RNA sequence: GGGAACGACUCGAGUAGAGUCGAAAAGAUAUGGACACGCAACGAGCUUGGAUUUAUGACUGAUACUACCUCGGAAACGAGGUAGUGUUUGGUCAUUGUCAGCUCGGACAAGUGUCCUAAGUCAAAACUAUGCGUCCCGUUCGCGGGACGCAUAGAAUACCAAUAGUUAGUUCGCUAACUAUUGGUAAAAAGAAACAACAACAACAAC
Reactivity to DMS in 0.01 (KOAc 150mM, MgCl2 10mM, bicine 150mM(pH8.5), 24C), signal-to-noise 2, nucleotides 027 to 156: g020a120u000a230u020g010g010a030c010a020c010g000c010a180a200c000g000a010g000c000u000u000g050g020a040u010u000u000a010u010g020a000c020u000g030a020u000a000c010u000a010c010c000u000c010g000g010a160a140a300c010g010a030g010g040u000a000g000u010g020u000u010u010g130g010u010c010a010u000u000g020u010c010a060g000c020u000c000g000g000a100c090a130a300g000u000g010u000c010c010u010a000a100g000u000c050a100a050a120a200c000u010a020u000g000c000g020u000c010c010c000g010u000u010c300g040c020g050g040g010a000c000g000c000a000u010a000g000a080a100
Reactivity to 2A3 in 0.01 (KOAc 150mM, MgCl2 10mM, bicine 150mM(pH8.5), 24C), signal-to-noise 5, nucleotides 027 to 156: g030a020u080a030u120g000g000a000c010a000c010g080c080a040a070c020g000a000g030c040u140u220g200g010a080u300u300u090a000u070g000a010c000u010g000a000u000a010c000u000a000c000c000u010c010g000g030a070a060a040c020g010a000g010g000u000a000g000u000g000u000u040u140g020g010u010c000a000u000u000g000u000c000a000g000c000u000c010g010g020a010c020a040a060g000u000g000u000c000c000u000a030a000g020u000c020a010a010a070a130c000u000a000u000g000c000g000u000c010c020c010g000u040u070c290g020c000g060g000g000a000c000g000c000a000u000a000g000a000a000